[RMDB]
RNA sequence: GGGAACGACUCGAGUAGAGUCGAAAAGAUAUGGACCAGGGUGGGAGAAGUGUUCGGAAACGAACAUACUUCAUCGAUCACCACUGGUCCUAAGUCAAACCACGGGUGACUUCGGUCACCCGUGGAAUCCAUAGGAACACUUCGGUGUUCCUAUGGAAAAAGAAACAACAACAACAAC
Reactivity to DMS in 0.01 (KOAc 150mM, MgCl2 10mM, bicine 150mM(pH8.5), 24C), signal-to-noise 2, nucleotides 027 to 126: g000a040u000a150u010g000g010a040c010c010a000g020g010g030u000g000g020g010a060g000a020a010g010u000g010u010u000c000g040g000a090a030a090c000g000a030a000c000a050u000a100c020u000u000c020a250u010c300g010a110u000c020a030c000c000a180c010u000g010g000u000c000c000u000a000a050g000u000c020a160a120a290c000c000a010c000g030g000g030u000g000a000c000u000u020c240g040g010u000c000a010c000c010c000g010u010g000g010a010a020
Reactivity to 2A3 in 0.01 (KOAc 150mM, MgCl2 10mM, bicine 150mM(pH8.5), 24C), signal-to-noise 2, nucleotides 027 to 126: g000a000u030a000u080g000g000a000c010c010a010g010g030g010u050g020g130g080a230g000a060a000g010u000g000u030u010c020g010g000a030a040a010c000g020a000a000c010a020u140a020c000u040u020c020a180u300c120g260a160u060c020a000c000c020a150c020u000g010g000u010c000c000u000a000a000g000u000c000a000a020a080c000c000a010c000g000g010g000u040g030a000c010u140u220c300g050g000u000c000a000c100c000c010g020u000g000g000a000a010
The record gives the reactivity of an RNA of 177 nucleotides to DMS and 2A3. DMS (dimethyl sulfate) methylates the pairing face of unpaired adenines and cytosines. Source: RMDB library TTRDES, as collected in RNAgym. The RNA was probed in 150 mM KOAc, 10 mM MgCl2 and 150 mM bicine (pH 8.5) at 24 C. The DMS profile rests on 2,248 reads. Reactivities are given for positions 27 through 126.